[RMDB]
RNA sequence: GGGAACGACUCGAGUAGAGUCGAAAAAGCACGCAGUUCAUCCGUCAGGCGUGGGGCACCGUAACGCUGUUUUGACCGGGUAAAAGCCGCGAGGACAACGCUGUCGCAGUGUUGGCGGAACUGCUGAGGAUUCGUACAUCUUCGGAUGUACGAAUCCAAAAGAAACAACAACAACAAC
Reactivity to DMS in 0.01 (KOAc 150mM, MgCl2 10mM, bicine 150mM(pH8.5), 24C), signal-to-noise 2, nucleotides 027 to 126: a110g030c120a110c140g010c010a000g000u010u000c130a080u000c050c020g000u010c040a020g010g000c010g040u000g000g000g000g000c070a050c120c070g020u010a090a110c050g000c080u010g010u010u000u010u000g000a300c300c020g000g030g000u010a110a060a040a190g000c000c020g000c020g030a170g000g020a040c040a000a010c030g030c090u000g020u000c050g000c050a020g030u000g000u000u000g000g010c000g000g010a060a050c010u010g000c030u010g000a200
Reactivity to 2A3 in 0.01 (KOAc 150mM, MgCl2 10mM, bicine 150mM(pH8.5), 24C), signal-to-noise 2, nucleotides 027 to 126: a050g180c110a050c070g000c010a030g010u150u090c040a080u030c070c000g010u010c000a020g040g070c110g160u020g020g050g000g000c040a000c060c030g010u050a100a010c030g000c080u040g070u070u050u040u150g040a020c000c050g000g040g070u110a090a090a000a000g220c020c000g020c040g030a070g080g010a020c020a040a000c060g030c060u030g030u080c040g030c260a030g030u040g070u230u090g010g000c020g000g000a030a040c020u000g040c000u000g030a030
This 177-nucleotide RNA was probed chemically with DMS and 2A3. The DMS profile rests on 1,417 reads. The data come from the RNA Mapping Database (RMDB), library OK2TRN. Conditions: 150 mM KOAc, 10 mM MgCl2 and 150 mM bicine (pH 8.5), 24 C. For 2A3 the reverse transcriptase was SuperScript II with manganese. Reactivities are rounded to 0.1 and cut off at 0 and 3.